[RMDB]
RNA sequence: GGGAACGACUCGAGUAGAGUCGAAAAGACGGCGAUCGCGUUUUGCAUAUGGACAUUUCUGAUUCUUGUCCAGGUAUUCCGGUCGAAGAUCGUGAAAAAGUUUUUGAUCGCUUCUAUAGAUCGGUGAGUUGUUAGAGGGGUUCGCCCCUCUAACAACAAAAGAAACAACAACAACAAC
Reactivity to DMS in 0.01 (KOAc 150mM, MgCl2 10mM, bicine 150mM(pH8.5), 24C), signal-to-noise 2, nucleotides 027 to 126: g010a050c020g000g020c000g000a030u000c060g030c070g010u000u010u000u020g020c090a080u030a120u000g000g010a030c020a070u000u000u010c190u010g010a150u030u010c100u000u030g010u000c010c000a020g000g010u000a150u000u000c030c030g010g020u000c000g020a120a100g010a010u000c040g020u000g000a070a050a130a060a110g000u000u000u010u000u000g000a090u000c030g010c140u000u000c030u010a060u010a160g010a010u000c020g020g000u000g000a120
Reactivity to 2A3 in 0.01 (KOAc 150mM, MgCl2 10mM, bicine 150mM(pH8.5), 24C), signal-to-noise 1, nucleotides 027 to 126: g050a010c080g010g000c100g070a020u000c050g020c090g020u020u000u200u270g060c030a040u060a240u190g000g000a020c000a000u080u110u000c180u130g160a240u150u000c020u060u100g010u040c000c000a010g090g010u050a050u210u000c010c030g010g000u030c050g010a000a040g000a020u000c020g000u100g000a020a000a000a060a180g040u150u150u050u130u150g020a020u020c000g000c080u020u060c050u080a190u090a100g040a020u020c000g050g040u010g020a020